[RMDB]
RNA sequence: GGGAACGACUCGAGUAGAGUCGAAAAGAUAUGGAAGCGAUGACAGCAACAGCGUGUGGAUCGGAAACGAUCCCACGACAUGCUGAGUCGCUUCCUAAGUCAAAAGCUGGACGUUCGCGUCCAGCAACGAUUUAGUCAGGUUCGCCUGACUAAAUCGAAAAGAAACAACAACAACAAC
Reactivity to DMS in 0.01 (KOAc 150mM, MgCl2 10mM, bicine 150mM(pH8.5), 24C), signal-to-noise 3, nucleotides 027 to 126: g000a050u010a280u000g000g000a020a020g030c000g010a020u010g030a190c100a010g010c030a070a090c250a110g000c000g000u000g040u010g040g020a000u000c000g000g000a090a090a180c010g000a000u000c000c010c000a010c000g020a060c080a260u030g020c000u000g010a300g030u010c010g010c040u000u000c010c010u000a000a060g000u000c040a070a090a040a190g000c000u000g000g000a010c010g010u000u000c300g000c010g010u000c020c030a000g000c010a050a040
Reactivity to 2A3 in 0.01 (KOAc 150mM, MgCl2 10mM, bicine 150mM(pH8.5), 24C), signal-to-noise 2, nucleotides 027 to 126: g010a020u060a020u110g000g020a000a000g010c010g020a020u130g220a300c060a030g030c090a110a200c090a230g040c040g000u060g190u300g050g010a010u010c010g020g000a010a070a000c000g010a000u000c000c000c010a000c010g010a010c010a050u300g000c000u000g010a000g000u010c000g000c000u000u000c010c000u000a050a000g000u000c000a020a050a000a300g000c010u010g010g000a010c010g020u070u110c300g030c000g150u030c000c000a020g000c000a000a000